This 177-nucleotide RNA was probed chemically with 2A3 and DMS.
The RNA was probed in 150 mM KOAc, 10 mM MgCl2 and 150 mM bicine (pH 8.5) at 24 C.
The DMS profile rests on 5,485 reads.
2A3 adducts were read by reverse transcription with SuperScript II with manganese.
It was measured as part of the RMDB library M2PK90.
[RMDB]
RNA sequence: GGGAACGACUCGAGUAGAGUCGAAAAGCUGAGUAUACGAGGUUAGUUCAUUCUCGUAUGCAUGAUUGGACAAAUUAAAAUCUCAAUUUGGAUCAGGGGCUCCCUCCAGCGACGGCCGAACAUACAAUCAGGAUGUAUAGUUCGCUAUACAUCCUGAAAAAGAAACAACAACAACAAC
Reactivity to 2A3 in 0.01 (KOAc 150mM, MgCl2 10mM, bicine 150mM(pH8.5), 24C), signal-to-noise 3, nucleotides 027 to 126: g000c020u040g020a000g010u050a010u000a020c020g010a010g000g040u090u110a060g070u120u220c040a050u220u040c010u000c000g000u010a010u020g000c010a050u110g020a060u020u110g050g020a030c020a020a080a050u140u160a130a120a100a210u120c080u010c070a040a120u070u060u080g020g000a070u050c040a050g100g000g000g010c010u020c000c020c010u000c000c010a010g000c020g040a030c010g040g000c030c010g000a030a010c020a030u140a030c030a020a090
Reactivity to DMS in 0.01 (KOAc 150mM, MgCl2 10mM, bicine 150mM(pH8.5), 24C), signal-to-noise 5, nucleotides 027 to 126: g020c040u010g000a140g020u010a030u010a010c010g010a010g000g010u010u000a120g010u000u010c140a100u010u010c000u000c000g000u000a010u000g000c030a120u010g000a080u010u000g010g000a090c050a040a040a060u010u000a050a060a110a100u000c080u000c080a040a040u000u000u000g010g000a080u000c030a060g000g010g000g000c050u000c020c010c010u000c030c030a060g010c040g000a070c080g010g010c050c050g000a020a020c040a050u000a100c180a050a080